[RMDB]
RNA sequence: GGGAACGACUCGAGUAGAGUCGAAAAGAUGUGGAAACACAUCGUUUCCGCUUGUCUUUGAAAGACUUGCUUUUAUAUGCGGCAGACCCUGCUAUGCAUGUGUCUUCUGCUAAUGCACUGUAUGAUUUACGUACAUGUUGCUUUAGUGUAGCAGCUACAGCAAACAAGACUUCGGUCUUGUUUGCUGAAAAGAAACAACAACAACAAC
Reactivity to 2A3 in 0.01 (KOAc 150mM, MgCl2 10mM, bicine 150mM(pH8.5), 24C), signal-to-noise 2, nucleotides 027 to 156: g000a010u000g010u000g000g040a020a080a020c010a000c000a040u010c020g000u030u030u000c010c000g000c000u020u030g020u000c020u010u160u280g300a280a210a020g000a010c000u000u030g010c000u060u070u160u130a170u030a030u140g000c000g030g000c020a030g020a300c090c000c000u000g000c060u080a050u250g000c020a010u040g060u050g050u030c000u020u000c000u060g020c000u020a030a020u050g000c000a000c030u000g090u050a010u040g170a300u070u110u300a150c060g010u010a000c020a040u190g060u110u020g060c010u000u040u000a060g000u050g160u190a010g050c070a000g020c020u070a070